[RMDB]
RNA sequence: GGGAACGACUCGAGUAGAGUCGAAAAGUAACUUCUAGAGGAACUUCUCUUACGCGCUUUUGCGUGUGCAGAACGUCACUGAUAGACACCGUUGAGGUUUUGCAGUGAGAGAACGAGGAGGAGGUGGCGUAAUAAUUUACUUCGGUAAAUUAUUACGAAAAGAAACAACAACAACAAC
Reactivity to 2A3 in 0.01 (KOAc 150mM, MgCl2 10mM, bicine 150mM(pH8.5), 24C), signal-to-noise 9, nucleotides 027 to 126: g060u050a070a080c040u050u040c050u120a070g020a070g140g090a070a040c020u020u000c000u000c000u010u030a050c020g020c000g030c030u090u120u180u300g010c030g010u120g050u050g020c010a010g010a060a010c020g140u030c010a010c040u040g040a150u140a160g150a050c060a030c080c050g070u110u090g030a050g020g000u010u020u040u060g020c030a040g010u020g060a010g010a000g000a030a010c060g020a050g060g030a030g020g020a020g030g040u060g040g010
Reactivity to DMS in 0.01 (KOAc 150mM, MgCl2 10mM, bicine 150mM(pH8.5), 24C), signal-to-noise 9, nucleotides 027 to 126: g010u030a090a070c040u000u000c030u010a080g010a180g000g010a110a160c210u000u010c000u000c010u000u010a280c020g000c070g000c020u010u030u020u040g010c000g010u010g020u010g010c040a020g000a010a010c030g000u000c020a030c020u020g010a120u030a120g010a140c260a080c070c060g010u020u000g010a030g000g010u000u000u010u000g010c010a150g010u010g000a020g000a020g000a020a030c080g000a120g010g000a140g010g000a040g000g010u010g000g010
The record gives the reactivity of an RNA of 177 nucleotides to 2A3 and DMS. The 2A3 profile rests on 35,642 reads. Source: RMDB library OK1LIB, as collected in RNAgym. Conditions: 150 mM KOAc, 10 mM MgCl2 and 150 mM bicine (pH 8.5), 24 C.